The record gives the reactivity of an RNA of 177 nucleotides to DMS and 2A3. Reactivities are rounded to 0.1 and cut off at 0 and 3. Conditions: 150 mM KOAc, 10 mM MgCl2 and 150 mM bicine (pH 8.5), 24 C. The data come from the RNA Mapping Database (RMDB), library OK2TRN. For 2A3, 1,792 sequencing reads were counted.
[RMDB]
RNA sequence: GGGAACGACUCGAGUAGAGUCGAAAAUUGCUCGUCUAUGAGAGAUGAAUAGGAGGCUUAAGCCCAAUUUGUUAGAGCCUGACCACUGAAUUUUCUACCAGGAGGAUGAAGGAACAGAGGGCAAAAGCUUUGUAACGAUUUUCGAAUCGUUACAAAGAAAAGAAACAACAACAACAAC
Reactivity to DMS in 0.01 (KOAc 150mM, MgCl2 10mM, bicine 150mM(pH8.5), 24C), signal-to-noise 6, nucleotides 027 to 126: u000u000g020c030u000c010g030u000c050u000a110u010g020a150g000a100g010a080u010g010a070a080u020a060g010g030a100g000g020c010u000u010a090a200g020c010c020c010a100a100u000u010u000g010u010u000a130g010a120g020c020c010u000g000a110c060c050a090c050u000g000a100a080u010u000u000u010c100u010a210c200c110a080g010g000a060g030g010a050u000g010a160a040g000g000a050a040c070a040g000a180g000g000g000c030a050a090a080a080g010
Reactivity to 2A3 in 0.01 (KOAc 150mM, MgCl2 10mM, bicine 150mM(pH8.5), 24C), signal-to-noise 2, nucleotides 027 to 126: u100u020g010c010u030c050g090u000c140u070a180u190g080a090g000a020g030a130u080g080a030a120u070a140g090g000a030g050g000c020u050u050a080a000g010c000c010c040a050a080u170u100u120g050u010u080a050g010a010g130c000c000u020g030a050c010c010a010c020u010g030a090a100u120u050u120u100c040u040a140c030c000a040g020g080a080g060g000a080u110g050a070a010g010g010a020a020c030a030g070a060g000g030g000c040a080a080a000a000g000